[RMDB]
RNA sequence: GGGAACGACUCGAGUAGAGUCGAAAAGUACGACAACUUAUUACGCAUCUUCGUACGAUCGAUGCUAAGAUUAGUGGCGAAAGCCACAAGCACGGGAAUUCAUAUGUCAGAUCCGAGAGGAUUUGACGUCCUAGCCUGUGCAAGACUAGGUCAGACAAUCCUAGCAUCCAUUCGUGGAUGCUAGGAUAAAAGAAACAACAACAACAAC
Reactivity to DMS in 0.01 (KOAc 150mM, MgCl2 10mM, bicine 150mM(pH8.5), 24C), signal-to-noise 1, nucleotides 027 to 156: g000u000a030c000g020a120c060a090a160c100u000u000a220u000u000a150c190g050c100a100u000c030u000u000c020g060u000a050c010g010a250u000c090g010a100u000g050c010u020a050a160g010a120u000u000a110g020u000g010g050c000g030a150a180a240g000c020c020a020c020a030a080g060c010a050c000g020g000g000a070a260u010u000c080a070u000a050u000g020u000c000a000g020a050u000c000c020g010a270g000a280g000g020a030u030u000u000g000a000c020g000u000c050c050u020a040g010c000c010u000g000u060g000c050a060a050g000a080c030u000a000g000g030u000c030a300g000a070c090a150
Reactivity to 2A3 in 0.01 (KOAc 150mM, MgCl2 10mM, bicine 150mM(pH8.5), 24C), signal-to-noise 3, nucleotides 027 to 156: g060u060a040c010g030a010c100a100a100c150u110u110a050u170u120a100c090g000c000a060u010c040u050u060c040g170u170a060c100g010a000u040c080g000a000u020g030c010u040a050a030g020a130u050u210a010g010u000g000g000c020g050a080a010a010g000c020c000a000c000a020a000g030c000a010c010g000g000g050a040a070u120u110c060a050u080a060u270g000u000c000a000g000a000u000c000c000g010a020g000a000g050g000a000u000u000u000g020a000c000g000u000c000c000u040a090g020c000c010u020g050u040g030c030a020a000g020a010c080u120a020g160g000u010c030a000g020a110c050a030
Overview:
Conditions: 150 mM KOAc, 10 mM MgCl2 and 150 mM bicine (pH 8.5), 24 C. The record gives the reactivity of an RNA of 207 nucleotides to DMS and 2A3. 2A3 adducts were read by reverse transcription with SuperScript II with manganese. For 2A3, 1,361 sequencing reads were counted. High DMS reactivity at an A or C suggests that its Watson-Crick edge is free. Reactivities are given for positions 27 through 156.